[RMDB]
Structure probing data (2A3 and DMS) for a 177-nucleotide construct. The reactions ran in a buffer of 150 mM KOAc, 10 mM MgCl2 and 150 mM bicine (pH 8.5), at 24 C. For DMS, 157,883 sequencing reads were counted.
RNA sequence: GGGAACGACUCGAGUAGAGUCGAAAAGCUAGAGCGUUGUCGUAUUAGGCCGGAUAUGCGACGUCAGUUUGAUCCGGCUGCGAAGCGGUCGUGACCGGCCUAAGGAUCUUACUGGUGCUCUAGGAAAGGGUUGAUGUGUGUUCGCGCACGUUAGCCCAAAAGAAACAACAACAACAAC
Reactivity to 2A3 in 0.01 (KOAc 150mM, MgCl2 10mM, bicine 150mM(pH8.5), 24C), signal-to-noise 9, nucleotides 027 to 126: g060c000u000a000g000a000g000c010g050u070u080g060u080c030g010u060a060u040u030a020g020g010c010c010g040g020a110u150a060u210g010c000g000a000c010g040u120c020a060g000u010u080u120g060a070u050c020c020g040g000c020u010g000c030g030a060a020g150c060g050g040u020c010g010u010g030a020c020c000g000g010c020c000u010a020a010g020g010a040u030c020u050u100a050c030u080g060g030u090g000c000u000c000u000a000g000g020a040a070a050
Reactivity to DMS in 0.01 (KOAc 150mM, MgCl2 10mM, bicine 150mM(pH8.5), 24C), signal-to-noise 9, nucleotides 027 to 126: g010c000u000a010g000a010g010c010g010u010u020g010u010c110g020u010a140u000u000a010g000g000c000c000g000g000a100u030a090u020g000c000g000a060c010g010u040c020a070g010u000u000u010g000a070u010c050c030g010g010c020u000g010c240g000a090a090g010c070g010g000u010c020g010u010g000a090c030c000g000g000c000c000u000a020a020g000g010a040u010c070u020u020a070c140u030g010g020u020g010c000u000c000u000a000g000g000a060a080a110